[RMDB]
RNA sequence: GGGAACGACUCGAGUAGAGUCGAAAAACCGGAUUCAGGAGUACGCGACGAUGAUGACGGAGUUCACUGAAACAGCCCUCGAGUCGUGGGACGACGGUCAAACGCGGCUCGUCCACGAGGACAUGAUGGAAGUGACGCUGAAAAUCGUCGCCCGGGCAUCCUAAGCAGUCUUCGGACUGCUUAGGAUAAAAGAAACAACAACAACAAC
Reactivity to 2A3 in 0.01 (KOAc 150mM, MgCl2 10mM, bicine 150mM(pH8.5), 24C), signal-to-noise 1, nucleotides 027 to 156: a010c030c000g050g050a140u180u200c050a090g080g070a010g230u210a090c060g050c030g000a000c000g000a000u060g030a050u210g020a060c020g010g010a050g100u110u090c010a000c020u030g000a000a000a120c000a000g120c010c000c020u010c010g040a070g070u080c070g080u220g000g000g000a010c040g000a000c110g160g050u040c000a090a170a110c070g000c000g100g000c030u000c000g080u000c050c000a070c070g030a090g000g000a010c070a300u190g110a250u060g000g000a010a010g000u000g000a020c000g000c030u070g070a190a030a000a010u010c000g000u000c000g000c000c000c000g020g010g000c010

The data come from the RNA Mapping Database (RMDB), library OK3TST.
Structure probing data (2A3) for a 207-nucleotide construct.
The 2A3 profile rests on 469 reads.
2A3 adducts were read by reverse transcription with SuperScript II with manganese.